RNA sequence: GGGAACGACUCGAGUAGAGUCGAAAAGACAAGCGGGAUUCUCACCGCAUCGCGCACCGCAUGGAUCGCAUCCCAGUCUGCAGUGCCUUCAUAAAACUGGCAGCGCGUGCGGCCAUGCACCGUCACACCAUUUAUGCGCGUUCGCGCGCAUAAAUGGAAAAGAAACAACAACAACAAC
Reactivity to DMS in 0.01 (KOAc 150mM, MgCl2 10mM, bicine 150mM(pH8.5), 24C), signal-to-noise 1, nucleotides 027 to 126: g010a150c110a130a240g000c030g000g010g000a140u000u000c100u000c140a180c010c050g010c110a090u000c080g010c030g040c060a070c130c090g060c050a010u010g000g000a090u010c030g010c080a000u000c070c140c040a140g010u000c020u000g010c030a100g010u000g000c220c120u000u000c170a060u040a230a080a090a080c020u000g040g040c020a050g030c020g000c210g040u000g000c040g000g000c060c000a010u000g030c000a070c190c120g000u010c030a120c050a260
Reactivity to 2A3 in 0.01 (KOAc 150mM, MgCl2 10mM, bicine 150mM(pH8.5), 24C), signal-to-noise 1, nucleotides 027 to 126: g030a020c080a190a000g020c040g000g050g070a190u100u080c070u010c070a040c070c030g000c010a020u040c060g000c020g000c030a030c030c020g010c000a010u050g010g010a190u100c000g000c020a020u110c000c050c020a010g040u010c020u020g000c030a020g030u010g070c060c030u150u140c110a120u180a180a120a050a040c020u020g180g050c000a000g010c020g030c000g010u020g000c000g000g000c030c000a010u020g000c010a020c020c030g050u060c000a030c020a010
This 177-nucleotide RNA was probed chemically with DMS and 2A3. The DMS profile rests on 662 reads. The 2A3 profile rests on 1,298 reads. Conditions: 150 mM KOAc, 10 mM MgCl2 and 150 mM bicine (pH 8.5), 24 C. For 2A3 the reverse transcriptase was SuperScript II with manganese. It was measured as part of the RMDB library OK2TST.